[RMDB]
RNA sequence: GGGAACGACUCGAGUAGAGUCGAAAAAACGGGAUCACCGUACAUGAACAUAAACACGGUGGCGUGCAGUCUGGUGGGAGUACUACAGGAGGCCCGCAGUGACAGCCAGUUACACGGGGAUGAACCCGGAAGGCACCGGUUCGCUGACCGAUCACGACACCCCUAAUGCAUUCGUGCAUUAGGGGUGAAAAGAAACAACAACAACAAC
Reactivity to 2A3 in 0.01 (KOAc 150mM, MgCl2 10mM, bicine 150mM(pH8.5), 24C), signal-to-noise 1, nucleotides 027 to 156: a010a010c030g000g000g000a120u070c040a050c070c040g000u030a010c030a300u120g030a110a060c080a090u200a300a120a000c090a090c060g070g020u040g000g000c090g010u050g000c000a000g010u000c000u060g030g000u040g010g030g000a110g030u030a020c020u050a010c020a030g000g060a060g040g040c020c000c000g000c060a060g000u010g060a010c000a000g010c010c000a020g000u050u040a010c030a020c000g000g000g000g060a110u300g030a060a060c020c000c060g020g010a040a050g020g030c050a000c020c000g030g030u030u040c050g000c020u100g000a150c020c000g000a030u120c000a000c110g090a000

Source: RMDB library OK3TST, as collected in RNAgym. An RNA of 207 nucleotides, treated with 2A3 and read out base by base.